[RMDB]
RNA sequence: GGGAACGACUCGAGUAGAGUCGAAAAAUCCGAUUAAGAAACAGUUUCUGAGAUAUCAAGAAUUGCCUCCUGUUCAAGAGGAUGAUGAAUCGGAAUACACAACUGACUCUCAAGAAAGCAUCGACCAAGAGCGAGAAUCAUUCGUGAUUCUCGCUCUAAAAGAAACAACAACAACAAC
Reactivity to DMS in 0.01 (KOAc 150mM, MgCl2 10mM, bicine 150mM(pH8.5), 24C), signal-to-noise 1, nucleotides 027 to 126: a100u000c000c000g000a100u000u000a020a110g000a230a120a270c000a080g000u000u000u000c000u000g070a030g000a110u000a030u090c070a000a030g000a000a000u000u000g000c030c090u000c000c000u000g030u070u000c240a140a080g000a000g000g000a180u020g000a170u030g000a000a030u000c030g000g050a060a140u000a130c290a020c210a030a000c110u000g140a000c030u000c000u010c040a210a000g000a090a020a000g010c000a060u000c030g000a300c040c060a050
Reactivity to 2A3 in 0.01 (KOAc 150mM, MgCl2 10mM, bicine 150mM(pH8.5), 24C), signal-to-noise 2, nucleotides 027 to 126: a000u000c000c000g010a010u100u120a160a010g050a070a060a010c040a090g120u010u090u160c070u000g060a070g010a190u190a110u150c010a030a010g070a130a050u050u070g060c010c000u000c000c010u180g140u270u140c030a050a000g070a040g090g000a050u050g000a000u060g030a020a020u000c000g000g030a040a050u210a120c180a000c030a140a110c050u130g020a050c040u010c010u000c010a040a000g000a020a010a000g120c000a060u040c040g000a040c080c000a050
An RNA of 177 nucleotides, treated with DMS and 2A3 and read out base by base.
Values are in units of 0.01, from 0 to 300, in steps of 10.
The reactions ran in a buffer of 150 mM KOAc, 10 mM MgCl2 and 150 mM bicine (pH 8.5), at 24 C.
2A3 adducts were read by reverse transcription with SuperScript II with manganese.
For DMS, 993 sequencing reads were counted.
In probing experiments dimethyl sulfate is read out at A N1 and C N3, which are open when not base-paired.